[RMDB]
RNA sequence: GGGAACGACUCGAGUAGAGUCGAAAAUUUAGGGAAGGGACGUACGACGGACGAAAUCGAGAUAUUCAGAAGUUCGAUUUUAUCGUUGGAUGAACUGAAUCCGGAAGAAGAAUUUCUGCGCAAUUAACACCUAGCAUUUAUUCGUAAAUGCUAGGUGAAAAGAAACAACAACAACAAC
Reactivity to DMS in 0.01 (KOAc 150mM, MgCl2 10mM, bicine 150mM(pH8.5), 24C), signal-to-noise 7, nucleotides 027 to 126: u000u010u010a120g010g010g010a100a130g000g000g000a230c050g010u000a080c060g010a060c050g010g010a070c080g000a020a050a020u000c010g010a050g020a060u010a120u010u010c230a110g010a090a180g010u000u000c010g010a040u000u000u010u000a080u010c070g010u000u000g000g010a030u000g000a060a190c080u000g010a060a100u000c050c020g000g020a070a070g000a080a090g010a080a110u000u000u000c020u000g020c150g020c150a070a070u000u000a060a190
Reactivity to 2A3 in 0.01 (KOAc 150mM, MgCl2 10mM, bicine 150mM(pH8.5), 24C), signal-to-noise 4, nucleotides 027 to 126: u020u020u030a050g030g000g010a030a030g030g020g010a010c010g000u040a020c020g010a000c010g010g060a020c080g020a020a030a010u020c010g010a000g020a060u050a080u200u200c050a050g040a230a010g100u020u000c010g020a010u010u000u020u050a100u090c020g010u000u040g020g010a030u030g030a060a070c020u020g020a060a030u010c020c010g050g010a050a050g030a030a000g020a050a140u030u080u040c040u090g060c080g000c060a020a090u150u050a160a020
Structure probing data (DMS and 2A3) for a 177-nucleotide construct.
The RNA was probed in 150 mM KOAc, 10 mM MgCl2 and 150 mM bicine (pH 8.5) at 24 C.
DMS adducts were read by reverse transcription with MarathonRT.